[RMDB]
RNA sequence: GGGAACGACUCGAGUAGAGUCGAAAAGGUUACGAAACGGGGAAGGGUGGACAUAAAAAUCGUAGCGCCCGUCCCUUGCAGGAGUUUAAACAAGUGAGCCGCCACGGGGCCUGAGGCUGAGACCCUCUCGGACCUCGAGAUGAUGGGCAUGCCCAUGCCCAUGUAGAGCGUUCGCGCUCUACAUGGGAAAAGAAACAACAACAACAAC
Reactivity to 2A3 in 0.01 (KOAc 150mM, MgCl2 10mM, bicine 150mM(pH8.5), 24C), signal-to-noise 4, nucleotides 027 to 156: g030g000u060u060a030c030g050a070a070a030c050g010g000g000g010a010a030g020g020g000u040g030g020a020c010a060u300a090a230a040a060a040u240c130g040u080a050g190c000g020c030c020c000g020u030c000c000c000u010u080g020c050a010g030g060a050g000u100u130u110a120a150a040c060a060a070g040u020g070a020g030c030c030g030c020c020a020c020g000g000g010g010c000c010u020g000a000g010g030c020u040g020a040g050a130c010c040c010u070c010u020c060g260g030a300c000c020u020c020g030a070g000a020u170g030a020u040g000g040g000c050a060u130g050c000c000c000a000u060g010
Reactivity to DMS in 0.01 (KOAc 150mM, MgCl2 10mM, bicine 150mM(pH8.5), 24C), signal-to-noise 2, nucleotides 027 to 156: g020g010u010u000a100c080g030a050a070a090c080g010g060g000g030a070a030g020g020g030u000g000g000a040c080a170u020a080a070a140a060a060u000c090g020u000a110g060c040g000c040c030c020g000u000c010c000c000u000u000g060c030a100g010g010a170g010u000u000u000a120a130a140c100a020a210g100u010g000a060g030c040c060g020c000c010a200c040g000g010g010g020c000c000u000g020a040g020g020c090u010g000a180g000a130c080c020c040u000c000u000c040g030g000a040c040c020u000c000g000a110g000a060u000g000a120u000g010g000g000c040a100u000g010c010c030c020a230u010g000

Structure probing data (2A3 and DMS) for a 207-nucleotide construct. For DMS, 2,977 sequencing reads were counted. The reactions ran in a buffer of 150 mM KOAc, 10 mM MgCl2 and 150 mM bicine (pH 8.5), at 24 C.